An RNA of 177 nucleotides, treated with DMS and 2A3 and read out base by base. Reactivities are rounded to 0.1 and cut off at 0 and 3. It was measured as part of the RMDB libraries RFM100 and RFMREP. DMS adducts were read by reverse transcription with MarathonRT.
RNA sequence: GGGAACGACUCGAGUAGAGUCGAAAAGAAAGAAAGACACCACGCAGCGCCAGGUUUGUAGAGGGUCCGGUUAGCCGGACCAGUCGCAGAUGCGAUGGGCUCCUCGAACUGGGGCGUGGUGGGUUAAACUAAGACUUAGUUUCGACUAAGUCUUAGUAAAAGAAACAACAACAACAAC
Reactivity to DMS in 0.01 (KOAc 150mM, MgCl2 10mM, bicine 150mM(pH8.5), 24C), signal-to-noise 9, nucleotides 027 to 126: g010a090a100a090g010a100a090a120g010a120c000a010c000c000a010c010g010c010a080g030c090g010c030c010a030g000g010u010u010u020g020u010a080g000a010g010g010g010u000c000c000g010g000u010u040a130g020c010c000g000g000a020c000c000a020g010u000c000g020c000a210g010a130u050g020c000g000a010u000g000g020g010c130u020c010c020u000c010g000a080a120c010u000g000g000g000g010c010g030u000g000g010u000g000g000g000u010u010a070a110
Reactivity to 2A3 in 0.01 (KOAc 150mM, MgCl2 10mM, bicine 150mM(pH8.5), 24C), signal-to-noise 9, nucleotides 027 to 126: g110a020a080a010g120a030a100a010g100a010c010a000c000c000a000c000g010c020a120g200c050g110c040c010a040g050g050u070u160u180g060u080a020g000a010g000g010g000u000c000c000g010g040u130u170a090g150c010c000g000g000a000c000c000a000g010u000c000g000c010a060g080a300u300g040c000g000a000u010g010g060g010c030u060c010c000u010c010g020a080a050c000u010g000g000g000g000c000g000u000g000g000u000g000g000g000u040u080a100a100